About this RNA
The record gives the reactivity of an RNA of 177 nucleotides to 2A3 and DMS. DMS adducts were read by reverse transcription with MarathonRT. 2A3 adducts were read by reverse transcription with SuperScript II with manganese. DMS (dimethyl sulfate) methylates the pairing face of unpaired adenines and cytosines. For DMS, 9,541 sequencing reads were counted. Values are in units of 0.01, from 0 to 300, in steps of 10. For 2A3, 2,767 sequencing reads were counted.
[RMDB]
RNA sequence: GGGAACGACUCGAGUAGAGUCGAAAAUUGAAGGUUACUUCAUUUAUGACACUUGUGGUGGCUUUGAUAUAAAAAAUCCAGAUGGUAUUAUGAUCUCUCAGUAUGAUAUCAAUAUUACUGCUGAUGAUGCUUAGAAUUUAUUCGUAAAUUCUAAGCAAAAAGAAACAACAACAACAAC
Reactivity to 2A3 in 0.01 (KOAc 150mM, MgCl2 10mM, bicine 150mM(pH8.5), 24C), signal-to-noise 3, nucleotides 027 to 126: u010u030g020a020a000g050g010u130u070a090c010u020u020c010a020u030u070u110a200u140g070a030c020a000c130u080u060g010u020g020g020u010g020g020c030u010u020u090g060a030u040a020u090a110a110a050a010a010a040u100c040c050a050g040a240u090g030g020u040a030u080u010a030u070g030a010u010c020u000c010u000c040a030g050u080a150u160g050a030u020a020u110c000a050a030u060a040u070u030a050c030u040g050c010u020g020a090u050g010a020
Reactivity to DMS in 0.01 (KOAc 150mM, MgCl2 10mM, bicine 150mM(pH8.5), 24C), signal-to-noise 6, nucleotides 027 to 126: u000u010g020a030a030g010g010u000u000a070c010u000u000c010a020u010u010u000a100u010g010a140c130a050c080u010u000g030u000g010g010u000g000g010c040u000u010u000g000a080u010a070u040a000a020a120a090a080a070u010c030c030a030g010a090u000g000g010u000a020u000u000a050u000g000a030u000c050u000c020u000c090a090g010u010a050u010g010a030u000a060u000c040a050a070u000a030u000u000a030c060u000g010c040u000g000a100u000g010a140